Structure probing data (2A3 and DMS) for a 177-nucleotide construct.
Values cover nucleotides 27 to 126.
The RNA was probed in 150 mM KOAc, 10 mM MgCl2 and 150 mM bicine (pH 8.5) at 24 C.
[RMDB]
RNA sequence: GGGAACGACUCGAGUAGAGUCGAAAAGACGAUGGGCUUCGGCGCGCCGGCAGCACUCGGCGCGAAGAUCGCACGCCCCGAUCGCGUCGUCAUCGCGCUGGUCGGCGACGGCGGCUUCGGCCAGAACGUUAGUUCCAGCUUUCGAGCUGGAACUAACAAAAGAAACAACAACAACAAC
Reactivity to 2A3 in 0.01 (KOAc 150mM, MgCl2 10mM, bicine 150mM(pH8.5), 24C), signal-to-noise 1, nucleotides 027 to 126: g070a020c120g100a140u200g060g010g080c030u050u020c010g050g000c140g030c020g010c130c000g020g000c070a050g030c010a010c060u100c020g000g000c010g020c010g030a000a000g020a010u160c050g000c080a030c020g000c000c030c020c010g080a280u170c070g000c000g000u030c010g040u010c020a010u030c010g010c010g020c000u030g010g010u100c050g070g000c020g060a050c000g000g040c020g020g000c020u010u000c000g010g020c000c020a020g060a030a000c030
Reactivity to DMS in 0.01 (KOAc 150mM, MgCl2 10mM, bicine 150mM(pH8.5), 24C), signal-to-noise 2, nucleotides 027 to 126: g000a090c120g020a120u010g000g010g010c020u000u010c110g010g010c010g000c020g030c000c000g010g000c080a120g000c060a090c070u010c040g000g000c030g020c000g000a010a050g010a020u000c010g020c110a000c020g000c010c030c110c230g000a050u020c210g000c020g020u000c020g000u000c030a110u020c030g000c010g000c020u000g000g000u000c140g010g010c030g020a050c010g010g030c010g010g000c020u000u010c130g000g000c000c020a030g000a120a090c120